[RMDB]
RNA sequence: GGGAACGACUCGAGUAGAGUCGAAAAUCAGAAUCAGGCCGGAGUGUUUAGCGCUCCGUAAACACGGUCGUACAUACAGCCGGUAGCCUGGUUCCUUGCAUUGAGUGAUGUACGGAGUUUAUAGAGCAAAAGAAAGACCUGUUCGCAGGUCUUUCAACAUCAGCUCUAACUUCGGUUAGAGCUGAUGAAAAGAAACAACAACAACAAC
Reactivity to 2A3 in 0.01 (KOAc 150mM, MgCl2 10mM, bicine 150mM(pH8.5), 24C), signal-to-noise 2, nucleotides 027 to 156: u090c000a000g030a010a010u030c000a000g000g000c000c020g030g000a020g000u040g040u090u300u270a130g090c030g010c020u000c000c000g000u050a000a030a010c160a010c030g020g010u040c040g050u080a070c010a120u140a000c030a070g040c010c000g000g000u020a000g000c000c000u000g000g010u010u000c010c000u060u060g030c010a080u050u090g060a050g120u150g060a070u030g050u040a100c050g020g000a070g040u050u100u050a160u120a040g070a010g020c050a080a030a080a050g000a000a000a000g000a000c000c010u020g000u040u070c190g000c060a000g000g050u000c000u000u000u010c010a000a010
The data come from the RNA Mapping Database (RMDB), library M2RFOK. The record gives the reactivity of an RNA of 207 nucleotides to 2A3. For 2A3, 1,088 sequencing reads were counted. The reactions ran in a buffer of 150 mM KOAc, 10 mM MgCl2 and 150 mM bicine (pH 8.5), at 24 C.